[RMDB]
This 177-nucleotide RNA was probed chemically with 2A3 and DMS.
DMS adducts were read by reverse transcription with MarathonRT.
The data come from the RNA Mapping Database (RMDB), library OK2TRN.
The DMS profile rests on 12,232 reads.

RNA sequence: GGGAACGACUCGAGUAGAGUCGAAAACACCAAACUUUGUGAAUAGCUUUCGGAAGCUUUCCUGAGGCCGAGAGUCUGUGGAAGUUUGCAGAUAACCUUAAUUCCAGGGUUAUCAUGCGGACUGGUGACUACAUCAGCAAUUCGUUGCUGAUGUAGUAAAAGAAACAACAACAACAAC
Reactivity to 2A3 in 0.01 (KOAc 150mM, MgCl2 10mM, bicine 150mM(pH8.5), 24C), signal-to-noise 4, nucleotides 027 to 126: c050a040c020c000a040a040a060c100u200u170u140g100u080g080a140a050u060a120g000c000u050u030u070c040g040g070a070a060g070c000u070u050u100c030c070u060g050a020g050g000c010c020g020a020g000a010g070u030c080u130g090u100g070g020a050a020g010u030u010u030g000c000a000g010a000u000a000a010c000c000u080u070a120a100u300u070c120c080a030g000g010g000u000u000a000u010c010a030u020g010c000g000g010a010c030u020g020g050u080g040
Reactivity to DMS in 0.01 (KOAc 150mM, MgCl2 10mM, bicine 150mM(pH8.5), 24C), signal-to-noise 7, nucleotides 027 to 126: c100a130c030c020a070a080a110c100u000u000u000g010u000g010a100a060u010a080g010c030u000u010u000c060g010g010a070a050g010c050u000u000u010c090c070u000g000a080g010g020c010c020g000a050g000a030g010u010c040u000g020u000g010g000a130a040g000u000u000u000g010c010a030g010a010u000a010a010c000c000u000u000a090a150u010u020c230c220a070g000g000g010u000u000a000u000c000a050u000g010c000g010g000a030c020u000g000g020u010g000